An RNA of 177 nucleotides, treated with DMS and read out base by base. The DMS profile rests on 2,020 reads. It was measured as part of the RMDB library TTRINS.
RNA sequence: GGGAACGACUCGAGUAGAGUCGAAAAGAUAUGGAGACCACGGGAGAGGAACGCCUGAGGCCACUCUGUGUCGGAAACGACACAGGAGCCUCAGGCGUUCUACCCACCUCCGGUGGUCUCCUAAGUCCAUACCAGUUUAGUUCGCUAAACUGGUAUGAAAAGAAACAACAACAACAAC
Reactivity to DMS in 0.01 (KOAc 150mM, MgCl2 10mM, bicine 150mM(pH8.5), 24C), signal-to-noise 2, nucleotides 027 to 126: g020a140u010a300u010g000g000a040g020a030c000c010a000c030g000g010g000a040g000a140g020g010a040a010c020g040c030c030u030g010a050g030g020c000c040a120c100u000c000u000g010u000g020u020c030g000g000a120a090a210c020g000a030c010a000c020a000g000g000a260g030c000c000u000c000a000g020g000c020g000u000u010c000u000a040c050c040c180a300c120c010u000c010c000g010g060u000g000g000u000c000u010c000c010u000a000a050g000u000c020

Reactivities are given for positions 27 through 126. DMS adducts were read by reverse transcription with MarathonRT. The reactions ran in a buffer of 150 mM KOAc, 10 mM MgCl2 and 150 mM bicine (pH 8.5), at 24 C.